This 177-nucleotide RNA was probed chemically with DMS and 2A3.

RNA sequence: GGGAACGACUCGAGUAGAGUCGAAAACUAGUGCCAUUCGUGGCACUAGAAGGGGUCCAGCCUGGAAAGGCAGGAGGUAUUGGAAUGGUCGGGCCGCCAUUCAAGGUACGCUAUUCGUAGCGUACAAUCAGGUGGGAUGAUUCGUCAUCCCACCUGAAAAAGAAACAACAACAACAAC
Reactivity to DMS in 0.01 (KOAc 150mM, MgCl2 10mM, bicine 150mM(pH8.5), 24C), signal-to-noise 1, nucleotides 027 to 126: c000u000a020g010u000g010c000c000a060u000u010c260g010u000g010g010c000a000c000u000a000g010a070a050g030g000g000g010u000c000c020a050g050c010c000u000g000g020a100a100a000g020g040c000a040g030g030a020g000g000u000a180u000u010g000g000a020a010u000g000g010u000c010g000g000g010c000c020g000c000c030a020u000u000c010a140a060g000g010u010a000c000g000c000u000a010u010u000c200g020u000a030g000c000g010u000a020c020a070a110
Reactivity to 2A3 in 0.01 (KOAc 150mM, MgCl2 10mM, bicine 150mM(pH8.5), 24C), signal-to-noise 1, nucleotides 027 to 126: c000u000a000g000u000g010c010c000a030u040u040c210g090u070g000g000c000a000c000u000a000g010a010a020g020g030g010g010u040c020c010a010g000c000c030u080g160g120a260a080a010g030g020c010a000g010g040a020g000g050u200a250u210u300g120g000a010a020u010g000g000u000c000g000g000g000c000c000g000c000c010a000u020u000c020a020a020g190g000u000a000c010g000c000u000a020u020u240c300g090u020a000g010c000g000u010a000c000a010a110

For 2A3 the reverse transcriptase was SuperScript II with manganese.